[RMDB]
RNA sequence: GGGAACGACUCGAGUAGAGUCGAAAAGGAAGAAAGAAAGAAAUCUGACAGAAUGACGGAUUCGAUCGUUGUGGUCGGCGGGCCACCACGUCAUUCCUUCGCACUGUCUCCGGGCAGACCGCCAUAAAAAAGCGGAUCUACUUCGGUAGAUCCGCAAGAUUAUAGAUAUCUUCGGAUAUCUAUAAUCAAAAGAAACAACAACAACAAC
Reactivity to DMS in 0.01 (KOAc 150mM, MgCl2 10mM, bicine 150mM(pH8.5), 24C), signal-to-noise 1, nucleotides 027 to 156: g030g000a060a070g010a080a120a110g000a020a070a170g000a040a080a020u030c030u020g010a300c040a080g010a050a040u000g030a040c010g000g010a140u000u000c100g010a050u000c030g050u000u000g020u020g000g120u010c010g000g040c110g000g010g010c020c010a040c000c040a000c010g000u020c000a070u000u000c000c020u010u000c050g000c110a150c040u000g000u010c030u010c070c060g030g000g000c020a080g020a070c040c000g000c030c010a090u000a000a060a100a040a110a190g010c000g030g020a020u010c000u000a000c010u000u000c220g040g020u010a010g000a010u000c000c010g000c000a010a000
Reactivity to 2A3 in 0.01 (KOAc 150mM, MgCl2 10mM, bicine 150mM(pH8.5), 24C), signal-to-noise 5, nucleotides 027 to 156: g020g000a020a030g030a050a090a020g070a040a090a020g060a040a140a060u080c070u090g020a030c020a040g130a150a190u130g020a030c030g000g020a040u070u100c080g060a100u180c060g000u030u030g000u010g010g000u020c050g020g080c050g000g010g000c000c000a000c000c010a010c000g010u020c010a020u030u030c010c000u050u060c030g020c040a040c030u000g010u010c020u020c050c040g020g010g000c020a020g020a080c020c020g010c020c010a070u290a040a140a020a010a020a000g000c010g000g000a000u000c000u000a000c010u020u020c100g070g010u000a000g000a000u000c000c010g000c000a000a000